Structure probing data (2A3) for a 177-nucleotide construct.
The data come from the RNA Mapping Database (RMDB), library OK1LIB.
The reactions ran in a buffer of 150 mM KOAc, 10 mM MgCl2 and 150 mM bicine (pH 8.5), at 24 C.
The 2A3 profile rests on 575 reads.
RNA sequence: GGGAACGACUCGAGUAGAGUCGAAAACUGUACGACGGCGCUGGCGCCGCGUGAACGACGAGCGGGUCGAGGUGCUCAGCGACGAAGUGGUGCAGGCCCGCCGUGCCGGCUGCUCCGACACGUACCAGCGAUAUGCUCGUUUCGACGAGCAUAUCGCAAAAGAAACAACAACAACAAC
Reactivity to 2A3 in 0.01 (KOAc 150mM, MgCl2 10mM, bicine 150mM(pH8.5), 24C), signal-to-noise 1, nucleotides 027 to 126: c000u000g010u000a000c000g090a000c020g210g000c000g000c000u020g020g020c000g050c000c000g000c060g120u250g120a270a130c080g020a000c000g040a030g120c110g000g040g050u120c000g000a000g000g070u030g020c000u020c160a000g030c000g130a080c000g030a100a070g000u020g100g040u000g000c000a000g010g050c000c000c000g000c000c000g050u000g010c020c000g020g060c040u050g000c050u060c000c000g080a010c000a000c110g010u050a020c090c050a050